The record gives the reactivity of an RNA of 177 nucleotides to DMS and 2A3.
[RMDB]
RNA sequence: GGGAACGACUCGAGUAGAGUCGAAAAGGGAGACCCGAGCAGAGGCAUAGCGAACUGCGCACGGUGAAGCCUUGAGGGAAGGCCGUAGGACCCGGGUUCGAUUCCCGGCUGCUCCACCGAAGGGCCACGAUAGCCUCCGGUUCGCCGGAGGCUAUCGAAAAGAAACAACAACAACAAC
Reactivity to DMS in 0.01 (KOAc 150mM, MgCl2 10mM, bicine 150mM(pH8.5), 24C), signal-to-noise 1, nucleotides 027 to 126: g010g000g000a150g030a240c130c030c000g000a080g030c020a030g000a050g000g010c040a080u000a230g000c120g000a120a150c020u010g000c020g000c170a280c150g000g000u000g010a180a070g000c000c150u020u000g030a180g000g000g000a150a180g000g000c030c060g000u000a190g000g000a140c110c010c000g010g000g000u000u000c210g000a300u060u020c030c000c050g000g010c300u000g000c020u010c000c000a050c140c010g000a300a040g100g000g000c000c000a110
Reactivity to 2A3 in 0.01 (KOAc 150mM, MgCl2 10mM, bicine 150mM(pH8.5), 24C), signal-to-noise 1, nucleotides 027 to 126: g110g040g030a110g070a020c010c010c000g000a030g000c000a000g000a070g140g050c030a070u160a120g080c120g070a060a090c020u030g020c020g000c040a050c120g060g000u070g010a000a000g060c000c040u030u070g040a070g000g090g000a180a000g060g120c040c000g000u000a020g000g190a180c000c060c030g000g010g000u040u090c010g040a000u020u030c000c000c000g000g000c000u020g010c020u020c000c040a050c000c020g000a040a000g040g070g080c010c010a000
Description:
DMS (dimethyl sulfate) methylates the pairing face of unpaired adenines and cytosines. The RNA was probed in 150 mM KOAc, 10 mM MgCl2 and 150 mM bicine (pH 8.5) at 24 C. DMS adducts were read by reverse transcription with MarathonRT. 2A3 adducts were read by reverse transcription with SuperScript II with manganese. Source: RMDB library OK1LIB, as collected in RNAgym.